[RMDB]
RNA sequence: GGGAACGACUCGAGUAGAGUCGAAAAGAAAAGAGGCGAAAAGCUGAAGAAAACGGCAAACGCCACAAACGUCGUGAAAAUAAAAGCGAAGAAACGCACUCGACACGGCGAUCGAGUAAAAAGAAAAGGUAAAUAGGAUAUUCGUAUCCUAUUUACCAAAAGAAACAACAACAACAAC
Reactivity to DMS in 0.01 (KOAc 150mM, MgCl2 10mM, bicine 150mM(pH8.5), 24C), signal-to-noise 3, nucleotides 027 to 126: g000a080a130a030a110g010a180g000g000c000g000a100a040a110a140g000c000u000g000a050a140g070a180a070a120a040c040g020g040c000a070a060a300c000g000c000c000a080c130a030a020a060c020g020u000c000g060u000g000a130a020a020a070u030a050a000a080a090g020c000g000a190a130g080a050a070a110c020g010c050a080c040u010c010g000a130c020a070c030g020g010c030g010a170u010c030g040a020g030u010a030a100a030a100a160g000a120a110a050a040
Reactivity to 2A3 in 0.01 (KOAc 150mM, MgCl2 10mM, bicine 150mM(pH8.5), 24C), signal-to-noise 6, nucleotides 027 to 126: g080a000a120a010a020g160a050g010g010c030g070a060a010a000a070g010c040u060g040a100a020g090a020a110a000a000c010g010g000c010a080a090a000c010g000c000c020a030c030a040a120a000c000g010u010c010g040u080g180a080a060a020a010u300a050a070a050a010g040c040g030a090a030g130a120a250a010c030g000c020a010c010u010c020g020a010c010a010c060g010g020c010g000a010u020c000g000a020g040u110a010a080a080a030a000g140a020a070a020a000
Chemical mapping of a 177-nucleotide RNA with DMS and 2A3. The reactions ran in a buffer of 150 mM KOAc, 10 mM MgCl2 and 150 mM bicine (pH 8.5), at 24 C. For DMS the reverse transcriptase was MarathonRT. The DMS profile rests on 5,431 reads. 2A3 adducts were read by reverse transcription with SuperScript II with manganese.